RNA sequence: GGGAACGACUCGAGUAGAGUCGAAAAGAGAAGGGAAAGCAUUUUGUUCUGACCAUAAUGACAUAAGGAGUUCAUUUCACACCAAACAUCUUUCCAGCAUGUUUCUCCCAUUGAGAAACAUCCUAGCCAUAACCGUCAGGUUCGCCUGACGGUUAUGAAAAGAAACAACAACAACAAC
Reactivity to 2A3 in 0.01 (KOAc 150mM, MgCl2 10mM, bicine 150mM(pH8.5), 24C), signal-to-noise 3, nucleotides 027 to 126: g040a000g040a050a050g040g000g020a070a030a000g000c070a080u060u030u060u110g060u080u020c050u030g060a080c020c000a030u120a140a030u100g040a000c020a030u210a120a140g160g010a060g080u060u040c020a030u030u060u030c050a040c010a010c060c000a030a030a030c030a040u010c010u010u040u000c030c010a010g040c070a050u030g010u010u010u000c000u000c070c030c050a210u150u290g010a010g000a000a000a010c000a000u000c000c000u060a050g020c030
Reactivity to DMS in 0.01 (KOAc 150mM, MgCl2 10mM, bicine 150mM(pH8.5), 24C), signal-to-noise 4, nucleotides 027 to 126: g000a100g010a110a070g000g010g010a030a040a070g020c240a060u000u000u000u000g000u000u000c100u000g010a090c300c070a080u010a030a040u000g000a050c050a110u040a090a080g020g010a100g010u000u010c030a070u000u000u010c110a030c090a070c120c040a010a040a040c130a050u000c040u000u000u000c000c020a100g000c160a030u000g000u010u000u000c000u000c000c300c220a080u010u010g010a000g010a010a010a020c020a020u000c080c040u000a080g020c210
The record gives the reactivity of an RNA of 177 nucleotides to 2A3 and DMS. For DMS, 2,349 sequencing reads were counted. The 2A3 profile rests on 3,376 reads. 2A3 adducts were read by reverse transcription with SuperScript II with manganese.